RNA sequence: GGGAACGACUCGAGUAGAGUCGAAAAGAUAUGGAGUCAGCAACAGCUAUAAGUCGGAAACGACUUGAUAGACAUGCUGUCUCCUAAGUCAAAGUCGAUAUGAUGAGUUCGCUCAUCAUAUCGACAACGGUAUUAAAAACUUCGGUUUUUAAUACCGAAAAGAAACAACAACAACAAC
Reactivity to 2A3 in 0.01 (KOAc 150mM, MgCl2 10mM, bicine 150mM(pH8.5), 24C), signal-to-noise 4, nucleotides 027 to 126: g020a000u040a020u090g010g000a000g010u020c000a000g000c010a010a120c050a300g030c000u000a000u010a040a000g010u010c000g030g000a040a030a040c020g020a000c000u000u030g060a010u020a010g070a160c030a040u030g000c000u010g010u000c000u000c000c000u010a060a010g040u030c050a150a050a050g000u000c000g000a000u010a000u010g000a000u000g010a010g020u090u170c290g090c160u000c000a000u000c000a010u000a000u010c000g000a000c000a000a000
Reactivity to DMS in 0.01 (KOAc 150mM, MgCl2 10mM, bicine 150mM(pH8.5), 24C), signal-to-noise 4, nucleotides 027 to 126: g000a040u010a290u000g000g000a020g020u000c000a000g020c000a030a080c290a150g010c010u000a000u000a020a000g000u000c010g010g000a080a040a130c000g000a010c000u010u000g020a010u000a010g000a220c090a170u000g000c000u000g000u000c000u000c000c000u010a010a050g000u000c020a080a090a120g010u000c010g010a000u000a000u000g000a010u000g010a000g010u000u010c260g010c000u000c000a000u000c000a000u000a000u000c010g010a000c000a020a040
Structure probing data (2A3 and DMS) for a 177-nucleotide construct.
For DMS, 4,839 sequencing reads were counted.
2A3 adducts were read by reverse transcription with SuperScript II with manganese.
Conditions: 150 mM KOAc, 10 mM MgCl2 and 150 mM bicine (pH 8.5), 24 C.